[RMDB]
RNA sequence: GGGAACGACUCGAGUAGAGUCGAAAACUAUGUUCCUUGGAACAGGACGUCAUAGAGGGUGAGAAUCCCGUGUGGCGAGGAUCCCAGUUAUUUGUAAAGUGCUUUCGACGAGUCGAGUUGUUUGGGAAUGCAGCUCUAAGUGGGUGGUAAAUUCCAUUGAUAGAUAACUCUUCGGAGUUAUCUAUCAAAAAGAAACAACAACAACAAC
Reactivity to DMS in 0.01 (KOAc 150mM, MgCl2 10mM, bicine 150mM(pH8.5), 24C), signal-to-noise 1, nucleotides 027 to 156: c030u010a080u000g060u000u000c050c040u000u060g050g000a090a040c070a090g030g020a110c060g050u000c030a080u000a050g040a220g010g040g020u000g020a300g000a280a280u000c010c010c000g000u010g040u000g000g000c010g040a150g030g010a160u010c010c000c000a180g000u010u000a100u010u010u010g060u010a120a140a170g040u000g000c060u000u000u000c010g000a040c010g010a200g000u000c040g010a110g010u000u000g010u000u000u000g000g000g000a080a160u000g000c020a150g000c010u000c020u010a050a110g010u000g000g000g000u000g010g070u010a030a040a110u000u000c000c020a300u000
Reactivity to 2A3 in 0.01 (KOAc 150mM, MgCl2 10mM, bicine 150mM(pH8.5), 24C), signal-to-noise 2, nucleotides 027 to 156: c030u040a050u170g010u040u080c000c040u050u130g090g010a060a020c010a060g010g070a020c010g010u020c010a010u050a070g220a140g100g000g000u020g030a030g030a020a060u030c010c000c040g030u030g000u010g000g020c030g020a020g040g050a020u050c000c000c000a010g020u070u100a090u080u110u120g080u110a080a070a060g070u070g070c020u000u030u120c030g020a020c000g010a030g060u020c010g010a000g000u020u000g020u030u010u050g030g000g010a000a010u030g020c050a020g020c020u000c000u070a130a090g030u150g050g040g010u040g030g020u060a160a200a050u010u020c000c000a000u020